The record gives the reactivity of an RNA of 177 nucleotides to 2A3 and DMS. The RNA was probed in 150 mM KOAc, 10 mM MgCl2 and 150 mM bicine (pH 8.5) at 24 C. For DMS, 1,213 sequencing reads were counted. Source: RMDB library RFM100, as collected in RNAgym. As a SHAPE reagent, 2A3 marks flexible, mostly unpaired nucleotides at the ribose 2'-OH. DMS adducts were read by reverse transcription with MarathonRT.
[RMDB]
RNA sequence: GGGAACGACUCGAGUAGAGUCGAAAAUGGUGAGGCCGGGUGACGACAGAAAAGCUACCCCAGGGAUAACAGAGUUGUCCCCGGCGAGAGUACAUAUCGACCCGGGGGCUUGCUACCUCGAUGUCGGCGAGUGCUUCAGAUUCGUCUGAAGCACUCGAAAAGAAACAACAACAACAAC
Reactivity to 2A3 in 0.01 (KOAc 150mM, MgCl2 10mM, bicine 150mM(pH8.5), 24C), signal-to-noise 2, nucleotides 027 to 126: u190g010g010u090g020a100g110g030c010c000g020g020g000u270g000a010c000g000a000c000a050g180a020a090a030a010g000c040u070a130c000c030c000c000a030g000g000g030a090u170a130a110c040a060g090a010g100u000u010g000u000c010c000c000c010g000g000c000g000a020g020a000g000u080a040c020a040u110a030u060c050g000a000c000c010c050g030g010g030g000g000c000u030u070g000c030u040a100c010c010u030c000g050a050u070g040u020c020g000g050
Reactivity to DMS in 0.01 (KOAc 150mM, MgCl2 10mM, bicine 150mM(pH8.5), 24C), signal-to-noise 1, nucleotides 027 to 126: u020g010g010u030g000a060g000g020c020c020g060g000g010u000g000a000c110g040a000c000a180g020a040a120a050a100g040c050u000a080c070c010c040c170a300g000g000g000a080u010a000a090c130a140g010a230g020u000u000g000u000c000c000c030c050g010g000c000g000a000g000a060g050u070a080c180a030u040a110u010c000g000a090c280c110c030g050g000g000g030g000c040u000u030g000c110u050a060c100c030u020c050g000a080u020g000u000c030g020g000